[RMDB]
RNA sequence: GGGAACGACUCGAGUAGAGUCGAAAACGCGGGCAGGCACUGGACACCGGGCGCUGGGGCGCGCAUACCGCCACCGCCGAUCUGGACGCGGUGCCGCAGGUGGUGUUCACCGACCCGGAGAUCGCCAUAAUCGUAUCGGAUUCGUCCGAUACGAUUAAAAAGAAACAACAACAACAAC
Reactivity to 2A3 in 0.01 (KOAc 150mM, MgCl2 10mM, bicine 150mM(pH8.5), 24C), signal-to-noise 2, nucleotides 027 to 126: c080g020c020g030g000g000c050a050g030g000c050a030c180u060g020g000a020c010a010c050c000g060g060g020c000g000c000u060g060g090g130g030c010g000c000g000c030a040u140a110c000c000g010c010c010a040c000c000g040c010c020g040a130u110c110u240g110g030a040c040g020c020g010g000u010g020c080c020g000c020a040g000g030u070g010g030u020g020u080u060c040a030c040c010g070a160c010c000c010g000g000a090g000a040u130c070g000c030c000a020
Reactivity to DMS in 0.01 (KOAc 150mM, MgCl2 10mM, bicine 150mM(pH8.5), 24C), signal-to-noise 4, nucleotides 027 to 126: c200g020c040g040g000g010c170a080g020g010c300a060c200u010g000g000a060c060a120c030c030g020g000g000c040g040c030u010g000g010g010g010c150g000c050g010c140a120u010a110c210c020g000c030c020a030c020c030g000c050c030g010a080u000c210u000g000g000a210c300g010c020g030g000u010g000c090c130g020c080a090g000g010u010g010g000u000g010u000u000c000a050c050c020g010a120c020c020c010g000g000a090g000a070u000c090g000c010c030a160

Source information:
An RNA of 177 nucleotides, treated with 2A3 and DMS and read out base by base. Reactivities are rounded to 0.1 and cut off at 0 and 3. Values cover nucleotides 27 to 126. 2A3 adducts were read by reverse transcription with SuperScript II with manganese. The RNA was probed in 150 mM KOAc, 10 mM MgCl2 and 150 mM bicine (pH 8.5) at 24 C.